[RMDB]
RNA sequence: GGGAACGACUCGAGUAGAGUCGAAAAGAAGUCGGAUUGAAUUCAACGACAAGCUCGUUCUACACCGGAAAAGGCCUGUAGUUCGAGCGAUUAGUCUUGACGAGUCUGAGCUGACGUCUUGACGAGAGGGAAGGUGCACCUUCGGGUGUACCUUCCCAAAAGAAACAACAACAACAAC
Reactivity to DMS in 0.01 (KOAc 150mM, MgCl2 10mM, bicine 150mM(pH8.5), 24C), signal-to-noise 3, nucleotides 027 to 126: g020a030a070g000u000c010g040g030a070u030u020g010a050a090u010u020c010a060a130c170g000a000c030a080a130g010c000u010c020g000u000u000c000u000a000c010a030c110c020g000g010a030a110a100a270g010g000c300c160u000g010u000a000g000u000u000c000g010a000g030c000g000a010u030u010a190g000u000c000u030u020g030a040c250g010a020g030u020c030u020g010a050g000c020u000g010a080c030g020u000c000u010u000g030a070c140g000a120g000a200
Reactivity to 2A3 in 0.01 (KOAc 150mM, MgCl2 10mM, bicine 150mM(pH8.5), 24C), signal-to-noise 4, nucleotides 027 to 126: g100a130a010g040u000c000g000g090a060u090u140g130a210a270u240u060c070a060a010c000g010a010c000a020a000g000c010u000c000g010u010u000c010u000a000c010a000c020c020g160g080a110a060a040a060g060g070c030c040u010g000u000a000g000u000u000c000g000a000g000c000g000a000u010u040a010g010u000c000u010u030g000a010c090g030a020g090u010c090u200g060a040g070c050u070g040a020c000g000u000c000u040u000g010a010c070g020a020g030a040

Conditions: 150 mM KOAc, 10 mM MgCl2 and 150 mM bicine (pH 8.5), 24 C. An RNA of 177 nucleotides, treated with DMS and 2A3 and read out base by base. The DMS profile rests on 3,824 reads. It was measured as part of the RMDB library OK1LIB. For 2A3 the reverse transcriptase was SuperScript II with manganese. Values cover nucleotides 27 to 126.